Conditions: 150 mM KOAc, 10 mM MgCl2 and 150 mM bicine (pH 8.5), 24 C. Structure probing data (DMS and 2A3) for a 207-nucleotide construct. For 2A3, 455 sequencing reads were counted. It was measured as part of the RMDB library OK3TST.
RNA sequence: GGGAACGACUCGAGUAGAGUCGAAAACUGGGUGGGCUGUGAUCCUAUAUGUAGGGCUGGCAAAGUCCUUGUUCCACUCCUUCUUGCAGUGGAUCUUGCCGCUUCUCUGAAAAUGAUUGAAAUGCCCACAGCACUUGCAGAGCAAGCAGAAAAGACACAUAGCCCAGUAGUUCGCUACUGGGCUAUGAAAAGAAACAACAACAACAAC
Reactivity to DMS in 0.01 (KOAc 150mM, MgCl2 10mM, bicine 150mM(pH8.5), 24C), signal-to-noise 2, nucleotides 027 to 156: c050u010g000g010g020u000g000g010g080c000u040g000u000g030a080u010c030c050u000a090u000a050u010g020u020a020g010g000g040c040u000g050g040c080a060a040a080g030u000c020c050u000u000g000u000u000c000c010a060c040u000c040c100u040u000c100u000u030g020c070a040g010u010g000g000a030u000c010u000u000g010c010c010g000c030u000u000c010u000c010u000g010a080a060a110a060u000g020a160u000u000g000a080a110a130u010g000c020c020c030a080c110a090g010c030a070c040u000u000g000c010a070g000a140g030c050a060a040g010c000a150g010a130a080a050a070g000a190c000a200
Reactivity to 2A3 in 0.01 (KOAc 150mM, MgCl2 10mM, bicine 150mM(pH8.5), 24C), signal-to-noise 1, nucleotides 027 to 156: c000u050g030g090g000u000g000g030g030c020u000g060u070g160a020u000c010c060u100a050u010a090u180g150u200a090g000g000g050c080u130g040g010c030a000a050a060g090u160c090c000u070u100g000u010u000c010c000a010c010u020c030c030u150u260c060u100u170g050c050a020g000u000g000g000a000u010c090u010u000g030c050c000g010c030u300u090c000u000c020u010g000a150a020a080a090u200g000a040u000u050g030a100a030a060u150g000c000c000c020a000c000a000g020c030a010c000u000u010g020c010a030g020a000g220c000a020a000g000c010a020g030a090a080a000a000g160a000c000a020